Overview
This 177-nucleotide RNA was probed chemically with DMS and 2A3. DMS adducts were read by reverse transcription with MarathonRT.
RNA sequence: GGGAACGACUCGAGUAGAGUCGAAAAGGAUCGCGGUUCGCCGCGAUCCAAAUAAAAGCUAGUCACGCAAAAGGAAGACUAGGAUGCAAGAAACGUAUAAAAAAAGAGGACUCUUCGGAGUCCUCAAGAGACAUCAUAUGUUCGCAUAUGAUGUCUCAAAAGAAACAACAACAACAAC
Reactivity to DMS in 0.01 (KOAc 150mM, MgCl2 10mM, bicine 150mM(pH8.5), 24C), signal-to-noise 1, nucleotides 027 to 126: g030g030a020u000c000g020c000g000g020u010u000c110g010c000c040g000c000g030a010u010c000c000a000a020a040u020a020a080a140a080g000c000u000a000g000u000c010a120c090g000c090a110a090a130a110g010g000a090a120g000a000c030u000a000g020g000a110u000g000c150a060a040g000a060a030a010c080g000u010a100u010a010a030a100a070a080a090a170g000a020g010g010a050c000u000c020u000u020c110g010g000a030g000u010c000c000u000c000a000a030
Reactivity to 2A3 in 0.01 (KOAc 150mM, MgCl2 10mM, bicine 150mM(pH8.5), 24C), signal-to-noise 2, nucleotides 027 to 126: g030g010a010u000c010g000c010g090g050u040u050c200g000c070c010g090c020g000a000u020c000c000a000a000a000u030a000a030a000a010g050c010u000a000g000u000c000a070c100g060c040a150a070a000a260g060g090a080a190g050a020c000u000a000g010g060a070u130g090c060a080a040g060a250a190a050c080g070u170a050u290a230a160a030a000a000a000a040g000a000g000g000a000c000u010c000u040u060c190g030g000a000g000u010c000c010u000c000a000a000

For DMS, 1,057 sequencing reads were counted.